[RMDB]
RNA sequence: GGGAACGACUCGAGUAGAGUCGAAAAUGUACAUUAUCAGUGAGAGACUUGCAAAGACAAAGAGUUAUGUGAUAUAACACUACCUUAUGGGUUCCUAUAUGGAGGGUUUUAUUACCUGUGUGGUGAUGUGCCCAAUCAUAGCUGCUUCAAAAAUAUAAGUACAACCUACUUUCGAGUAGGUUGUACUAAAAGAAACAACAACAACAAC
Reactivity to 2A3 in 0.01 (KOAc 150mM, MgCl2 10mM, bicine 150mM(pH8.5), 24C), signal-to-noise 2, nucleotides 027 to 156: u120g010u020a020c020a030u030u090a060u100c040a020g010u040g030a090g020a010g000a040c060u030u050g000c030a050a080a040g020a070c060a010a150a000g060a040g010u000u050a060u060g090u040g090a050u030a000u040a240a060c020a020c060u040a020c030c000u070u070a050u090g060g000g000u060u090c010c010u050a040u010a020u170g050g010a040g000g030g010u050u020u090u070a040u080u050a010c010c000u120g040u030g060u120g170g010u000g030a030u000g050u080g010c030c010c000a020a020u060c020a000u020a050g030c030u080g040c000u100u070c090a030a040a030a050a120u300a050u240a130
Reactivity to DMS in 0.01 (KOAc 150mM, MgCl2 10mM, bicine 150mM(pH8.5), 24C), signal-to-noise 1, nucleotides 027 to 156: u010g020u000a070c010a030u010u000a070u000c050a080g040u020g000a140g040a170g000a070c060u000u000g010c000a070a090a100g000a090c090a040a140a140g010a080g000u000u000a020u000g020u000g010a140u000a060u010a040a050c020a070c020u000a080c040c020u000u000a090u010g000g010g010u000u000c020c020u010a070u010a120u000g010g000a130g010g050g020u000u010u030u000a030u010u000a050c010c020u010g060u020g010u000g010g020u010g010a020u000g010u000g000c020c000c030a050a110u000c040a030u010a150g010c010u000g000c010u000u000c010a010a050a060a150a100u010a050u010a070